Structure probing data (2A3 and DMS) for a 170-nucleotide construct. Reactivities are given for positions 27 through 129. The RNA was probed in 150 mM KOAc, 10 mM MgCl2 and 150 mM bicine (pH 8.5) at 24 C.

RNA sequence: GGGAACGACUCGAGUAGAGUCGAAAAAAUUUACCCGCAAAUGUCCCAUACUCUCGUGUUAUUUCCAGGAUGGGCUUUAAACUCGAUGCAACAGUUCCUGGAUAUCCUAAGCUUUUCAUUACUCGUGCCGGGAUCUUCUUCGGAAGAUCCAAAAGAAACAACAACAACAAC
Reactivity to 2A3 in 0.01 (KOAc 150mM, MgCl2 10mM, bicine 150mM(pH8.5), 24C), signal-to-noise 8, nucleotides 027 to 129: a000a000u190u120u100a150c010c000c000g010c040a040a050a010u100g040u050c010c010c000a020u080a100c070u060c000u020c110g050u090g050u150u090a130u110u100u010c040c010a020g030g000a040u030g010g000g000c000u030u110u070a070a080a030c040u050c080g070a070u110g030c030a060a070c010a180g040u060u060c020c000u030g000g020a030u030a030u060c010c020u050a060a040g020c000u040u020u020u030c020a090u020u070a030c010u020c010g020u030g050c040c020g030
Reactivity to DMS in 0.01 (KOAc 150mM, MgCl2 10mM, bicine 150mM(pH8.5), 24C), signal-to-noise 4, nucleotides 027 to 129: a020a000u080u070u060a090c050c060c000g060c220a000a000a000u050g020u050c000c000c000a170u060a030c080u000c030u040c050g020u020g030u020u040a000u000u000u000c000c000a030g060g010a000u030g030g030g020c060u040u050u050a060a110a100c060u010c100g000a120u040g030c080a090a090c120a120g000u000u000c010c000u020g020g080a020u030a110u040c030c060u050a070a070g010c040u020u020u020u020c040a060u000u050a100c000u050c000g020u040g020c040c090g000